RNA sequence: GGGAACGACUCGAGUAGAGUCGAAAAAAUAAUUGGCGAAACUCGUUUCGCGUUGGCUGCCUAAUUCAAGGAAUUAUCGUGCCUUCAUGCUAAGGGUUUGAUAUCUGCUAAAACCCGGUGCAUUCAUAAGACUUUUGCUUGUUCGCAAGCAAAAGAACCAUCAAACGGGUUUCGACCCGUUUGAUGGAAAAGAAACAACAACAACAAC
Reactivity to 2A3 in 0.01 (KOAc 150mM, MgCl2 10mM, bicine 150mM(pH8.5), 24C), signal-to-noise 1, nucleotides 027 to 156: a000a000u240a040a070u050u120g040g010c000g050a000a000a090c000u020c140g110u060u040u040c040g020c080g000u020u040g020g000c050u060g000c020c020u070a070a070u100u040c170a170a120g040g000a040a060u050u060a040u190c030g050u060g000c010c000u000u080c030a050u020g000c010u020a000a000g000g000g010u000u000u000g090a090u060a110u170c090u150g060c020u100a020a030a020a020c000c020c000g070g020u030g020c000a000u020u120c060a040u060a240a100g110a190c000u000u000u000u000g010c000u000u000g020u060u000c050g000c120a000a000g000c000a000a000a000a000g020a000a000